Notes:
This 177-nucleotide RNA was probed chemically with 2A3 and DMS. The RNA was probed in 150 mM KOAc, 10 mM MgCl2 and 150 mM bicine (pH 8.5) at 24 C.

[RMDB]
RNA sequence: GGGAACGACUCGAGUAGAGUCGAAAACGCCGCGGUAAUACCGGCAGCCCGAGUGAUGACCGCUAUUAUUGGGCCUAAAGCGUCCGUAGCUGGCCAGGCAAGUCCAUCGGGAAAUCCGCGCGCCCAAAUGAUAUAUCCCCUUCGGGGGAUAUAUCAUAAAAGAAACAACAACAACAAC
Reactivity to 2A3 in 0.01 (KOAc 150mM, MgCl2 10mM, bicine 150mM(pH8.5), 24C), signal-to-noise 3, nucleotides 027 to 126: c030g040c070c010g000c030g010g020u110a080a040u080a190c050c040g000g020c030a040g010c030c000c010g020a060g060u140g060a120u090g060a050c010c030g010c030u020a020u150u050a120u110u300g050g000g000c020c010u200a260a130a010g050c150g040u030c040c010g000u020a000g000c070u090g000g010c020c010a010g020g020c020a060a040g030u080c050c010a030u080c040g000g020g000a050a050a000u050c000c000g000c000g000c000g020c000c000c000a040a090
Reactivity to DMS in 0.01 (KOAc 150mM, MgCl2 10mM, bicine 150mM(pH8.5), 24C), signal-to-noise 3, nucleotides 027 to 126: c030g040c170c020g020c050g010g040u000a100a110u010a070c080c060g000g020c050a130g000c010c010c010g020a100g010u000g000a100u010g000a100c050c050g000c050u020a050u020u030a100u050u010g010g000g000c010c010u040a060a160a130g000c180g020u010c020c050g010u010a040g000c030u030g070g000c000c010a100g010g000c080a110a080g010u010c020c070a070u030c000g010g000g000a050a300a070u000c010c030g030c030g030c060g000c020c010c010a080a130

Values cover nucleotides 27 to 126. DMS adducts were read by reverse transcription with MarathonRT.